[RMDB]
RNA sequence: GGGAACGACUCGAGUAGAGUCGAAAACCUAUGUUUAGGUAUGAAAUGCAUUUUUUUUUGUAUACAUCGGGGGAUCGUGAAGAUUUUAUCGGUGAGUAUGUAGACUCGGAAUGACAAAGAUGAAUCUUGAAUAAUCAGACAUAGAAUGAUAAGGUUGCCGAACUAGGUAGUUCGCUACCUAGUUCGGAAAAGAAACAACAACAACAAC
Reactivity to 2A3 in 0.01 (KOAc 150mM, MgCl2 10mM, bicine 150mM(pH8.5), 24C), signal-to-noise 1, nucleotides 027 to 156: c000c000u080a050u090g100u000u120u040a020g030g000u020a040u040g050a140a080a030u050g070c100a100u020u020u000u000u000u000u000u040u000g030u000a050u070a100c010a020u000c050g030g000g000g000g000a000u000c000g070u080g100a000a070g030a100u010u010u010u010a120u040c010g050g000u080g010a010g000u080a050u160g120u170a100g100a120c000u000c050g030g040a130a060u120g000a000c040a030a080a000g040a040u060g020a110a040u040c020u000u000g020a040a010u060a020a010u060c000a000g030a020c000a000u020a040g150a240a030u080g040a080u030a050a020g150g000u120u050g020

Chemical mapping of a 207-nucleotide RNA with 2A3. The data come from the RNA Mapping Database (RMDB), library PDB130. 2A3 adducts were read by reverse transcription with SuperScript II with manganese. For 2A3, 430 sequencing reads were counted. The RNA was probed in 150 mM KOAc, 10 mM MgCl2 and 150 mM bicine (pH 8.5) at 24 C.